Structure probing data (DMS and 2A3) for a 177-nucleotide construct. 2A3 adducts were read by reverse transcription with SuperScript II with manganese. For 2A3, 1,103 sequencing reads were counted.
[RMDB]
RNA sequence: GGGAACGACUCGAGUAGAGUCGAAAAGAUGAGUCAGGUGAAUCUAUAAAGUUAGAGAUACGUGUGGCUCCCGAUGAUAUAGGGAAGAUCAUAGGUAGACGGGGAAAUACAAUACACGCAUUAAGAACUCAUAGGAGAUCUUCGGAUCUCCUAUGAGAAAAGAAACAACAACAACAAC
Reactivity to DMS in 0.01 (KOAc 150mM, MgCl2 10mM, bicine 150mM(pH8.5), 24C), signal-to-noise 2, nucleotides 027 to 126: g010a120u020g020a020g000u000c040a030g010g050u000g000a080a120u000c010u000a040u010a080a050a110g010u000u000a060g010a110g010a130u000a050c060g000u010g030u000g010g040c050u000c000c020c010g010a100u010g000a090u010a090u010a140g000g000g000a050a050g000a060u000c030a040u000a040g000g020u000a020g010a090c070g030g000g000g020a060a060a080u010a060c080a080a060u000a050c060a080c060g000c050a010u010u010a060a100g010a140a160
Reactivity to 2A3 in 0.01 (KOAc 150mM, MgCl2 10mM, bicine 150mM(pH8.5), 24C), signal-to-noise 2, nucleotides 027 to 126: g060a100u070g000a000g080u030c020a010g000g000u060g060a040a050u020c030u040a120u140a190a300a020g110u050u050a030g000a000g010a060u050a090c030g040u110g010u000g060g000c000u030c020c000c000g040a060u090g010a010u030a030u160a230g060g000g020a090a020g010a100u050c030a040u050a080g010g100u040a010g040a050c020g000g020g010g110a090a030a000u160a040c040a030a000u060a090c010a010c070g080c020a010u110u080a100a010g000a090a010

Overview
Conditions: 150 mM KOAc, 10 mM MgCl2 and 150 mM bicine (pH 8.5), 24 C.